[RMDB]
RNA sequence: GGGAACGACUCGAGUAGAGUCGAAAAUUCCAUGGCUUUAAGAUUACAAUGUACUUGAGUCAUUGACAUGUGAGAUCAAUAUACCUGCAUGUUAGUCUUAAGUUCUGAUAGAAAUGACAUGCAAUUACCAUAUGCAAUCGUUCGCGAUUGCAUAUGGAAAAGAAACAACAACAACAAC
Reactivity to 2A3 in 0.01 (KOAc 150mM, MgCl2 10mM, bicine 150mM(pH8.5), 24C), signal-to-noise 3, nucleotides 027 to 126: u090u000c030c010a020u030g040g000c000u080u020u200a070a000g000a030u050u150a130c080a090a260u230g080u080a050c010u000u000g000a000g010u030c030a030u010u050g050a020c070a090u150g070u120g140a080g040a170u130c050a070a030u100a020u050a260c030c020u000g000c010a010u000g030u000u010a040g040u000c000u030u050a110a100g030u220u050c060u080g060a110u040a170g080a010a090a050u070g010a010c010a020u030g000c010a010a010u100u020a080
Reactivity to DMS in 0.01 (KOAc 150mM, MgCl2 10mM, bicine 150mM(pH8.5), 24C), signal-to-noise 2, nucleotides 027 to 126: u000u000c030c010a140u000g000g000c030u000u000u000a050a040g000a100u010u010a130c110a120a080u000g000u010a080c040u010u000g000a010g010u010c080a070u010u010g010a030c080a080u000g000u010g010a030g000a030u000c100a050a070u010a120u000a070c150c030u000g000c000a020u000g020u000u000a030g000u000c030u000u000a060a080g000u000u000c090u000g020a120u000a070g000a020a040a070u000g000a030c050a010u010g010c130a040a080u000u010a110